[RMDB]
RNA sequence: GGGAACGACUCGAGUAGAGUCGAAAAGGAAUUCUUCGGAAUUCCCUAAUGGGGGUCUGACUGAAUGGAACUACAUCAUCGAUCAUCUGAAGCCUCCACGGAUGGGAGAUGCCGCGUCAGACGGAGGCACCCUUGCAGACUACAUUCGUGUAGUCAACAGUAUAUUUAAAUUCGUUUAAAUAUACUGAAAAGAAACAACAACAACAAC
Reactivity to DMS in 0.01 (KOAc 150mM, MgCl2 10mM, bicine 150mM(pH8.5), 24C), signal-to-noise 2, nucleotides 027 to 156: g040g000a000a000u000u000c000u010u010c300g030g010a060a020u010u000c010c010c000u000a020a130u000g070g020g000g060g000u000c010u020g000a080c000u000g040a170a100u000g060g060a130a200c130u000a080c070a060u010c040a210u000c180g000a230u000c030a020u010c000u000g020a050a160g000c000c010u000c000c030a300c140g020g000a030u000g000g050g000a300g020a090u010g000c030c050g020c190g060u000c030a070g010a080c020g030g000a110g080g060c040a050c000c010c080u010u000g010c050a130g010a060c000u000a010c000a090u000u010c220g000u000g090u000a020g020u010c000a060a170
Reactivity to 2A3 in 0.01 (KOAc 150mM, MgCl2 10mM, bicine 150mM(pH8.5), 24C), signal-to-noise 5, nucleotides 027 to 156: g010g000a010a000u030u060c050u120u230c300g070g010a010a000u010u020c030c000c010u150a180a190u190g000g010g000g010g010u000c000u000g010a020c010u090g130a130a260u290g020g030a090a090c080u250a080c170a210u300c000a000u050c050g000a010u050c010a000u000c000u030g030a110a020g030c000c010u000c000c010a010c010g000g000a000u000g000g020g000a050g000a010u050g160c040c020g060c020g000u000c000a000g010a020c020g000g000a000g000g000c010a010c010c000c000u020u150g110c100a040g010a000c000u020a000c010a020u010u150c190g080u080g000u050a010g000u010c010a000a010

Chemical mapping of a 207-nucleotide RNA with DMS and 2A3. The RNA was probed in 150 mM KOAc, 10 mM MgCl2 and 150 mM bicine (pH 8.5) at 24 C. For DMS, 2,509 sequencing reads were counted. It was measured as part of the RMDB library RNAMAK.